[RMDB]
RNA sequence: GGGAACGACUCGAGUAGAGUCGAAAACCAUGUGACCGUAACUUUCGUAGUCAUUGAUAAAGGGGCAGGUCUCGCUCUUUUGUCAUUGCGGUUGCCUAGAGGCAUGGUCGUUUACCGCGACUUUCCAAUACGAAGAGGGCCUUCGGGCCCUCUUCAACAUACUUUAAUCGUUCGCGAUUAAAGUAUGAAAAGAAACAACAACAACAAC
Reactivity to 2A3 in 0.01 (KOAc 150mM, MgCl2 10mM, bicine 150mM(pH8.5), 24C), signal-to-noise 3, nucleotides 027 to 156: c020c000a020u060g000u000g010a010c010c010g030u020a050a040c040u070u160u160c120g030u040a060g060u080c090a100u070u070g000a010u000a000a010a000g020g010g020g000c030a040g070g170u070c080u060c060g000c000u000c000u010u010u000u000g010u010c010a020u010u060g000c010g000g000u000u000g010c000c030u100a080g010a040g040g000c050a040u080g000g020u000c010g010u070u080u070a110c030c030g010c000g010a000c000u030u090u070c070c030a070a110u070a120c080g000a000a000g010a000g010g010g000c000c000u040u050c110g030g030g000c000c000c000u000c000u000u000c000a000a000
Reactivity to DMS in 0.01 (KOAc 150mM, MgCl2 10mM, bicine 150mM(pH8.5), 24C), signal-to-noise 2, nucleotides 027 to 156: c000c030a150u000g000u000g000a070c010c010g020u010a060a060c060u020u000u000c140g040u000a130g030u000c080a110u000u020g000a030u000a020a040a020g010g030g010g010c010a100g020g010u000c040u000c100g040c010u000c000u010u000u000u010g020u000c000a100u010u000g020c030g000g000u000u000g000c010c100u000a130g010a100g020g000c040a080u000g010g020u000c000g050u000u000u010a080c170c150g010c020g000a120c040u000u000u000c010c030a100a170u000a110c130g010a010a000g000a030g020g020g000c030c020u000u010c300g030g040g020c010c000c010u000c000u000u000c000a030a150